[RMDB]
RNA sequence: GGGAACGACUCGAGUAGAGUCGAAAAAUUGAAACAGUACUGACCAGUAAGACUCAUAAGCCUUGUUUCGAGAAGUAUUACAAAUAUUCCUUAAAGGGCCUUUAAUGGGGGGGAACCUCUGGGAGUCUAACCUGUAUAUGUUCGCAUAUACAGGUUAAAAAGAAACAACAACAACAAC
Reactivity to DMS in 0.01 (KOAc 150mM, MgCl2 10mM, bicine 150mM(pH8.5), 24C), signal-to-noise 4, nucleotides 027 to 126: a070u010u010g010a130a040a070c080a060g000u000a070c080u010g010a200c060c040a090g000u000a080a070g010a060c020u000c060a070u010a080a100g030c050c030u000u000g000u000u000u000c030g010a060g000a050a030g010u000a020u010u020a140c240a070a070a060u000a030u000u000c020c010u000u000a060a080a090g010g000g010c050c030u000u000u010a040a080u010g010g020g010g000g000g010g010a070a120c040c020u010c030u000g010g000g010a050g010u010c050
Reactivity to 2A3 in 0.01 (KOAc 150mM, MgCl2 10mM, bicine 150mM(pH8.5), 24C), signal-to-noise 1, nucleotides 027 to 126: a000u070u040g010a040a000a030c070a020g070u100a050c030u060g050a020c000c000a000g060u050a030a000g020a030c020u000c060a020u020a160a050g050c000c000u030u080g010u050u060u040c000g010a000g040a100a020g070u090a030u110u070a060c040a000a270a020u030a030u080u050c020c000u050u030a130a050a060g060g030g030c020c000u120u220u150a190a030u210g030g000g000g030g010g010g020a060a060c000c040u030c030u040g000g160g000a010g000u000c020